Description
This 207-nucleotide RNA was probed chemically with 2A3 and DMS. Source: RMDB library RNAMAK, as collected in RNAgym. For DMS, 3,109 sequencing reads were counted. Conditions: 150 mM KOAc, 10 mM MgCl2 and 150 mM bicine (pH 8.5), 24 C.
RNA sequence: GGGAACGACUCGAGUAGAGUCGAAAACGCUGGGCCAUACAACGGGGAGUAAGGGAGCUGAAGCGCGCACGGCAUCGAUCUUAUGAAAGACGUUGUGGCCUGUGCUGAAGCGCGCACGGCAACCGAAAGGUGCGACACUAAUGAUUCGUCAUUAGAAACAGGAGCUAAAAUUCGUUUUAGCUCCUGUAAAAGAAACAACAACAACAAC
Reactivity to 2A3 in 0.01 (KOAc 150mM, MgCl2 10mM, bicine 150mM(pH8.5), 24C), signal-to-noise 4, nucleotides 027 to 156: c040g000c030u050g010g000g000c000c000a050u100a200c090a100a000c010g000g070g070g020a040g030u030a050a070g020g010g010a020g010c000u020g020a180a050g010c020g000c000g020c000a010c040g010g000c010a050u300c050g060a050u000c040u030u130a080u120g120a240a110a060g140a050c010g000u010u010g030u020g020g010c010c010u020g020u020g000c020u130g030a100a030g000c030g000c010g020c030a010c060g040g000c050a090a090c010c000g060a030a030a010g010g000u040g010c010g050a020c030a000c090u010a010a000u000g050a010u050u080c200g040u020c090a010u060u050a010g030a050a050
Reactivity to DMS in 0.01 (KOAc 150mM, MgCl2 10mM, bicine 150mM(pH8.5), 24C), signal-to-noise 2, nucleotides 027 to 156: c060g000c010u020g020g020g010c000c010a040u000a040c060a070a050c000g030g000g000g010a300g000u000a020a040g000g020g000a110g010c020u000g010a060a050g030c010g030c020g000c020a300c020g010g040c000a190u000c090g010a070u010c030u000u000a070u000g050a110a100a200g010a100c000g020u000u000g010u000g000g020c000c010u000g020u060g000c010u010g000a050a070g040c020g000c070g000c040a140c060g000g000c010a120a200c010c030g000a070a090a150g000g000u010g020c010g020a210c130a200c010u000a010a020u000g000a060u010u010c300g010u000c000a050u010u000a040g000a080a160